The record gives the reactivity of an RNA of 177 nucleotides to 2A3 and DMS.
The RNA was probed in 150 mM KOAc, 10 mM MgCl2 and 150 mM bicine (pH 8.5) at 24 C.
Values cover nucleotides 27 to 126.
[RMDB]
RNA sequence: GGGAACGACUCGAGUAGAGUCGAAAAAACAGAUCAGUGUGGGCCCAAGGGCUCAUCAUUGGUUGCUGGUAACUCUUGAUCCAACUCCUUAAACACUGGUGGACCUGUUUACCUGAGGAAAGCCGAGCCGCAUAUGAAUAUUCGUAUUCAUAUGCGGAAAAGAAACAACAACAACAAC
Reactivity to 2A3 in 0.01 (KOAc 150mM, MgCl2 10mM, bicine 150mM(pH8.5), 24C), signal-to-noise 4, nucleotides 027 to 126: a000a010c040a020g030a030u020c010a000g010u010g000u020g030g000g000c040c000c010a100a130g130g000g000c010u000c020a040u100c010a000u020u020g020g000u030u030g050c060u020g050g040u050a060a060c020u030c010u120u070g050a060u070c020c010a020a050c010u040c020c020u080u160a070a110a010c070a030c120u090g000g000u020g000g030a040c010c010u010g060u080u110u070a110c020c050u070g050a040g030g040a050a040a020g000c030c010g020a020g040
Reactivity to DMS in 0.01 (KOAc 150mM, MgCl2 10mM, bicine 150mM(pH8.5), 24C), signal-to-noise 4, nucleotides 027 to 126: a060a040c070a110g000a010u000c010a000g010u010g030u000g010g000g010c010c000c040a110a170g030g020g010c000u000c020a010u000c030a010u000u000g000g000u000u000g010c100u000g000g000u000a040a060c130u000c050u000u010g000a070u010c020c010a060a080c060u000c040c040u000u010a090a080a080c200a080c080u010g010g030u000g010g000a250c050c020u000g000u000u010u000a060c070c030u010g000a120g000g010a060a080a110g010c030c020g010a110g010